[RMDB]
RNA sequence: GGGAACGACUCGAGUAGAGUCGAAAAGCCAAGUGCCCCACUUACCAGUCUACUGUGGGAUCCGUCGAGUGAGUGCAUGAUUGCAAUCAGUGGAACUCUCGGAAACCUUUGGCACGCACCCACACAACAUAUAGCGAUGGUUCGCCAUCGCUAUAUGAAAAGAAACAACAACAACAAC
Reactivity to DMS in 0.01 (KOAc 150mM, MgCl2 10mM, bicine 150mM(pH8.5), 24C), signal-to-noise 6, nucleotides 027 to 126: g010c020c010a030a030g000u010g010c190c000c000c010a020c030u000u010a060c100c100a080g000u020c070u000a090c160u030g010u000g000g000g010a190u000c020c010g010u020c280g000a040g000u010g000a150g000u000g010c020a050u020g000a130u030u030g000c070a030a070u000c020a130g030u030g020g020a190a100c010u000c000u000c010g010g000a050a180a140c070c030u000u010u010g000g000c020a030c040g010c150a110c000c000c000a100c130a100c180a100a180
Reactivity to 2A3 in 0.01 (KOAc 150mM, MgCl2 10mM, bicine 150mM(pH8.5), 24C), signal-to-noise 9, nucleotides 027 to 126: g010c000c010a030a000g080u070g120c010c010c010c000a010c010u060u120a120c030c080a110g110u090c100u100a090c060u110g010u020g010g010g010a020u020c010c010g030u070c110g020a020g030u060g010a040g040u100g040c040a090u100g060a170u200u190g040c030a060a090u030c010a040g080u100g090g060a040a010c000u000c000u000c010g000g000a050a060a060c010c000u070u070u060g010g000c020a010c060g050c010a070c000c030c000a010c010a000c010a090a050
Chemical mapping of a 177-nucleotide RNA with DMS and 2A3. The reactions ran in a buffer of 150 mM KOAc, 10 mM MgCl2 and 150 mM bicine (pH 8.5), at 24 C. For DMS the reverse transcriptase was MarathonRT. It was measured as part of the RMDB library OK1LIB. The DMS profile rests on 11,695 reads.